This 177-nucleotide RNA was probed chemically with 2A3 and DMS. The data come from the RNA Mapping Database (RMDB), libraries RFM100 and RFMREP. For DMS the reverse transcriptase was MarathonRT.

RNA sequence: GGGAACGACUCGAGUAGAGUCGAAAACACGUCUCUGGUAGCUACAUGCUUUGACCAGAGAUGCUAUGAUCAGGCCGAUACAAAAGUCGUUUCACAUGUUGAUAGGAACCUGGGGACGGCUUCUCCACUAUUACUGCUUAUUCGUAAGCAGUAAUAGAAAAGAAACAACAACAACAAC
Reactivity to 2A3 in 0.01 (KOAc 150mM, MgCl2 10mM, bicine 150mM(pH8.5), 24C), signal-to-noise 9, nucleotides 027 to 126: c030a000c010g000u000c000u000c000u000g010g010u020a010g000c020u120a120c110a290u300g010c010u190u120u250g110a030c000c000a000g000a000g010a000u000g000c000u100a090u140g040a090u080c050a040g030g020c020c020g070a060u040a210c030a010a040a000a000g010u000c010g010u000u000u020c040a040c000a040u070g020u040u030g090a210u100a080g040g030a010a010c010c010u010g010g000g010g010a010c030g020g000c000u070u010c020u010c010c010a020
Reactivity to DMS in 0.01 (KOAc 150mM, MgCl2 10mM, bicine 150mM(pH8.5), 24C), signal-to-noise 9, nucleotides 027 to 126: c130a140c030g010u000c000u000c000u000g010g010u000a030g010c010u000a100c300a100u030g010c010u000u020u030g010a030c000c000a020g000a010g000a010u000g010c130u010a050u000g000a150u010c080a150g010g000c020c020g010a280u020a010c030a010a110a130a010g000u000c000g000u000u000u000c000a080c150a100u010g010u000u000g000a100u010a060g000g010a040a060c020c090u000g010g000g010g010a040c140g010g010c080u010u010c020u000c020c040a230